[RMDB]
RNA sequence: GGGAACGACUCGAGUAGAGUCGAAAACAUGAGGUGAACAGCACGUUGCGAGUCGUGGAUCACAGGGUGUGGGCCUCCCCGGUUCGUGGGGAAUGUGGUGUUCAUAAACGCAGUACUGGUCGUUGUGGUCACGGCGUUCGCGGGGUUGUCGCAGCGCCCUUGCAUCUCCGUUCGCGGAGAUGCAAGGAAAAGAAACAACAACAACAAC
Reactivity to 2A3 in 0.01 (KOAc 150mM, MgCl2 10mM, bicine 150mM(pH8.5), 24C), signal-to-noise 1, nucleotides 027 to 156: c060a120u160g070a060g110g040u080g050a060a000c010a040g020c040a030c160g070u130u110g000c020g010a010g020u000c000g030u040g050g040a030u010c010a000c050a080g080g060g000u180g050u140g060g000g000c000c040u040c000c010c020c020g050g120u250u110c100g050u210g000g010g020g000a030a030u090g000u060g110g050u030g020u050u000c010a000u100a070a050a000c010g060c060a020g060u060a050c060u050g110g040u090c050g110u020u140g030u050g040g010u020c060a000c030g020g010c000g040u040u040c020g000c000g000g010g010g000u000u000g000u000c000g000c030a010g000c050g000c000
The data come from the RNA Mapping Database (RMDB), library OK3TST. An RNA of 207 nucleotides, treated with 2A3 and read out base by base. For 2A3 the reverse transcriptase was SuperScript II with manganese. The 2A3 profile rests on 781 reads. The reactions ran in a buffer of 150 mM KOAc, 10 mM MgCl2 and 150 mM bicine (pH 8.5), at 24 C.